[RMDB]
RNA sequence: GGGAACGACUCGAGUAGAGUCGAAAAGCUUUCCGGCGGCGAACAGCAAAUGCUGGCCAUUGCGCGCAUCCUGCGCACCGGGGUCAAGGUGCUGCUGCUGGAUGAGCCGACCGAAGGUCUUGCACCACGAUAGGCUCGUGUUCGCACGAGCCUAUCGAAAAGAAACAACAACAACAAC
Reactivity to 2A3 in 0.01 (KOAc 150mM, MgCl2 10mM, bicine 150mM(pH8.5), 24C), signal-to-noise 1, nucleotides 027 to 126: g000c000u050u030u020c050c100g030g000c020g000g020c000g010a060a000c000a020g000c010a060a060a000u130g030c020u030g000g000c000c000a120u040u120g000c030g000c000g000c030a080u270c040c160u190g040c020g010c000a000c010c020g120g010g000g000u020c030a090a060g150g020u100g020c010u000g030c000u000g000c000u000g020g000a060u090g020a020g040c030c000g100a200c010c010g020a080a020g030g020u020c020u010u110g020c080a040c050c000a010
Reactivity to DMS in 0.01 (KOAc 150mM, MgCl2 10mM, bicine 150mM(pH8.5), 24C), signal-to-noise 1, nucleotides 027 to 126: g020c040u000u010u000c030c110g000g010c000g000g050c010g020a120a180c030a020g070c000a010a070a230u000g010c000u010g000g000c010c020a070u010u000g010c080g010c020g030c000a090u030c260c200u010g000c010g000c000a000c090c100g000g020g010g000u010c050a060a130g000g010u000g040c020u000g000c180u000g000c010u000g000g000a010u000g020a250g000c000c010g000a110c000c120g010a030a040g000g000u000c000u020u000g010c090a170c050c000a240